[RMDB]
RNA sequence: GGGAACGACUCGAGUAGAGUCGAAAAGAGCUCACCAGAUUAAGUUUCUGCCCCUUCGUUUAUGCAAACAUAUGAGGAAUAAGUUAUUGGGACAACAAUUUGUCCGUAGGCAUUCUUUGUUUUGUACUACUAUAACAGAAUAACACAGACUCUGUAACGUUUAAGGGUGAUUCGUCACCCUUAAACGAAAAGAAACAACAACAACAAC
Reactivity to DMS in 0.01 (KOAc 150mM, MgCl2 10mM, bicine 150mM(pH8.5), 24C), signal-to-noise 2, nucleotides 027 to 156: g000a060g030c030u000c030a140c080c030a110g000a130u020u010a130a120g010u000u000u000c010u010g040c020c020c010c050u000u000c040g000u000u010u010a070u020g030c040a060a070a100c050a090u000a050u000g020a070g000g020a060a030u000a040a210g000u000u000a080u010u000g030g000g010a050c030a000a170c130a150a200u000u000u010g000u000c000c020g030u000a050g030g000c050a080u070u000c030u000u010u000g000u000u000u000u000g000u000a060c070u000a000c050u000a110u000a030a150c010a080g020a040a080u000a110a090c090a130c070a170g010a100c070u000c020u000g010u000a050a210
Reactivity to 2A3 in 0.01 (KOAc 150mM, MgCl2 10mM, bicine 150mM(pH8.5), 24C), signal-to-noise 3, nucleotides 027 to 156: g010a000g010c000u000c110a070c080c050a050g030a080u120u090a170a000g030u050u100u030c050u050g030c000c000c000c000u050u070c100g050u010u140u100a170u190g050c030a000a120a040c030a050u120a060u210g030a080g060g040a030a040u090a160a040g010u020u040a050u120u150g040g010g020a000c010a060a010c050a150a220u150u090u070g000u000c020c000g000u050a000g010g020c020a020u080u000c020u050u130u130g090u000u130u010u030g000u050a160c050u040a010c000u050a020u060a220a030c030a020g080a090a090u090a080a020c110a000c070a060g060a070c060u040c010u020g000u070a010a100

Overview:
Structure probing data (DMS and 2A3) for a 207-nucleotide construct. Source: RMDB library OK3TST, as collected in RNAgym. High DMS reactivity at an A or C suggests that its Watson-Crick edge is free. Conditions: 150 mM KOAc, 10 mM MgCl2 and 150 mM bicine (pH 8.5), 24 C.